[RMDB]
RNA sequence: GGGAACGACUCGAGUAGAGUCGAAAACUGACUUUGGCAUUCAGUGCCAAUGCGAUGGCGGUAACUGAAAUUCCUUUCUGGCACUCGAUGGAAGGGGAGUUAGGCGUAGAAGUUAACUCGUUAGCUGCCGAUUAUUUGUAUUCGUACAAAUAAUCGGAAAAGAAACAACAACAACAAC
Reactivity to DMS in 0.01 (KOAc 150mM, MgCl2 10mM, bicine 150mM(pH8.5), 24C), signal-to-noise 8, nucleotides 027 to 126: c050u000g010a140c090u000u000u000g010g020c020a050u000u000c190a090g010u000g010c010c010a020a020u000g010c080g010a090u010g010g010c030g010g010u000a050a070c070u010g000a080a070a130u000u000c020c020u000u000u000c040u000g010g020c070a100c060u000c110g010a100u010g000g010a050a050g010g000g010g000a040g010u000u000a050g010g000c040g010u000a060g000a160a110g010u000u000a050a060c050u010c060g010u000u000a080g010c070u000g010
Reactivity to 2A3 in 0.01 (KOAc 150mM, MgCl2 10mM, bicine 150mM(pH8.5), 24C), signal-to-noise 8, nucleotides 027 to 126: c020u020g130a040c010u050u040u060g030g000c010a030u070u070c090a180g090u020g000c000c010a020a030u090g010c060g130a120u110g030g010c030g010g030u040a060a030c030u040g070a040a050a090u060u050c010c000u040u070u040c040u030g100g000c040a050c080u040c060g140a110u150g050g080a060a040g010g000g020g000a030g020u050u070a040g050g000c040g010u040a030g020a160a000g020u040u060a090a050c050u050c130g040u030u040a040g040c060u050g030
Structure probing data (DMS and 2A3) for a 177-nucleotide construct.
It was measured as part of the RMDB library OK2TRN.
In probing experiments dimethyl sulfate is read out at A N1 and C N3, which are open when not base-paired.
For DMS the reverse transcriptase was MarathonRT.
The RNA was probed in 150 mM KOAc, 10 mM MgCl2 and 150 mM bicine (pH 8.5) at 24 C.